[RMDB]
RNA sequence: GGGAACGACUCGAGUAGAGUCGAAAACGUGUCCGUCGGCGUAGCCGACAACAUGCGCAGGUAGCCCAGACCUUCAAGGCUACGGUGCGUUGCGACGCACGGUCUGAUUCUUCACAACGACGUUCACAAGAUCGGAUCACUUUCGAGUGAUCCGAAACCUAUUAAUUGCGUUCGCGCAAUUAAUAGGAAAAGAAACAACAACAACAAC
Reactivity to DMS in 0.01 (KOAc 150mM, MgCl2 10mM, bicine 150mM(pH8.5), 24C), signal-to-noise 1, nucleotides 027 to 156: c010g040u000g060u020c020c080g030u000c010g050g020c050g010u010a200g060c010c010g000a030c000a020a030c000a040u000g000c040g020c040a060g030g070u000a050g010c000c020c200a130g000a170c060c060u020u010c110a170a220g010g000c000u000a040c000g020g000u010g020c000g000u000u000g000c100g030a130c000g000c030a110c000g030g000u020c090u000g020a150u000u000c040u000u000c040a120c030a100a190c050g040a090c020g010u000u010c000a060c020a090a170g000a160u000c030g010g010a020u010c000a010c000u010u010u000c230g000a020g020u000g000a010u010c000c000g020a010a030a060
Reactivity to 2A3 in 0.01 (KOAc 150mM, MgCl2 10mM, bicine 150mM(pH8.5), 24C), signal-to-noise 5, nucleotides 027 to 156: c020g000u020g000u050c110c090g000u010c000g000g020c220g170u220a050g010c000c000g040a000c000a000a000c000a030u120g030c100g020c090a040g000g070u000a000g000c010c060c050a040g060a060c010c030u080u050c050a040a010g010g000c000u010a000c010g040g090u010g000c010g000u010u060g050c170g090a030c010g000c000a010c010g020g000u000c020u030g020a040u030u050c030u100u100c060a060c020a190a110c050g060a010c040g040u020u060c040a050c030a170a070g040a200u000c000g000g000a000u000c000a000c010u040u090u140c220g080a010g000u000g000a000u000c000c000g000a000a000a000